[RMDB]
Chemical mapping of a 207-nucleotide RNA with DMS and 2A3. The 2A3 profile rests on 743 reads. For DMS the reverse transcriptase was MarathonRT. The reactions ran in a buffer of 150 mM KOAc, 10 mM MgCl2 and 150 mM bicine (pH 8.5), at 24 C.
RNA sequence: GGGAACGACUCGAGUAGAGUCGAAAAGGACGCAGACCAGGUGCUCCAUGACUGUUGUUGAAUGAAAACAAGAAGCAUGCCUGCACAGCAUCGUGUUAUUACUAUCAAUGUUACUCUUCAUUUCGCAAAAGAAAUACUGAUUAGGUCCUAUUGAGGACUCCGCUACUAAUUUCGAUUAGUAGCGGAGAAAAGAAACAACAACAACAAC
Reactivity to DMS in 0.01 (KOAc 150mM, MgCl2 10mM, bicine 150mM(pH8.5), 24C), signal-to-noise 2, nucleotides 027 to 156: g000g020a080c010g050c030a110g000a100c050c080a090g020g050u000g030c020u000c030c030a060u000g020a120c060u000g020u000u000g000u020u010g020a060a100u020g020a100a040a030a080c090a050a050g020a070a120g000c020a040u000g020c020c030u000g000c050a060c030a070g010c030a090u000c070g040u020g000u000u000a100u020u000a050c040u000a090u000c040a030a080u000g030u000u010a130c020u000c020u000u020c020a120u000u010u000c090g000c060a040a040a100a140g020a080a020a040u010a040c010u010g000a110u000u000a040g010g000u000c000c000u000a130u000u000g020a130g000g010a050
Reactivity to 2A3 in 0.01 (KOAc 150mM, MgCl2 10mM, bicine 150mM(pH8.5), 24C), signal-to-noise 2, nucleotides 027 to 156: g040g010a010c080g000c030a040g070a110c020c050a010g060g020u000g000c040u020c030c030a060u120g090a130c060u030g010u040u000g010u040u020g060a090a170u060g040a050a030a070a070c020a020a140g070a070a020g030c000a000u030g020c000c040u100g000c030a050c040a030g010c000a040u030c080g000u000g100u130u080a100u080u130a100c090u060a050u180c040a050a030u100g060u010u080a050c020u040c000u230u010c020a060u000u070u060c050g000c120a060a050a190a040g050a030a040a050u150a140c040u060g030a080u060u120a020g000g030u020c010c010u030a130u070u090g010a000g000g020a010